RNA sequence: GGGAACGACUCGAGUAGAGUCGAAAACCGGCGGCGCGCGUGGUGCUUGAGCGUGUGCGCGACGCGAUCGACCGGAACGAUCUGCCCGCAGCUCUAGGAUAUGUGCUGAGCAAUCGCGAGACCAAGCCAUUAAUGAGGUAUUCGUACCUCAUUAAUGAAAAGAAACAACAACAACAAC
Reactivity to 2A3 in 0.01 (KOAc 150mM, MgCl2 10mM, bicine 150mM(pH8.5), 24C), signal-to-noise 9, nucleotides 027 to 126: c000c000g010g000c000g010g010c010g000c000g000c010g030u050g060g050u050g060c020u100u160g110a070g080c080g040u100g030u060g020c010g000c000g040a100c010g010c010g030a120u070c010g130a190c010c000g020g010a040a030c020g020a040u010c060u080g020c010c010c050g060c020a020g000c000u020c030u110a100g090g060a130u080a080u300g080u060g010c030u020g010a020g020c000a020a040u070c040g010c040g060a030g010a050c020c020a040a010g060c020
Reactivity to DMS in 0.01 (KOAc 150mM, MgCl2 10mM, bicine 150mM(pH8.5), 24C), signal-to-noise 9, nucleotides 027 to 126: c010c010g000g010c020g000g000c060g000c020g010c020g030u010g010g030u010g010c010u000u020g010a120g020c090g030u010g020u000g010c020g000c010g000a040c030g000c000g010a090u020c030g000a120c020c010g000g010a140a170c050g000a040u010c070u010g000c020c040c080g010c050a050g010c020u010c030u020a160g020g010a120u030a060u030g010u000g010c040u010g000a140g010c040a070a040u000c030g010c080g000a100g010a180c040c020a080a080g000c120
An RNA of 177 nucleotides, treated with 2A3 and DMS and read out base by base. The data come from the RNA Mapping Database (RMDB), library OK1LIB. In probing experiments dimethyl sulfate is read out at A N1 and C N3, which are open when not base-paired. 2A3 adducts were read by reverse transcription with SuperScript II with manganese. The RNA was probed in 150 mM KOAc, 10 mM MgCl2 and 150 mM bicine (pH 8.5) at 24 C. The DMS profile rests on 61,947 reads.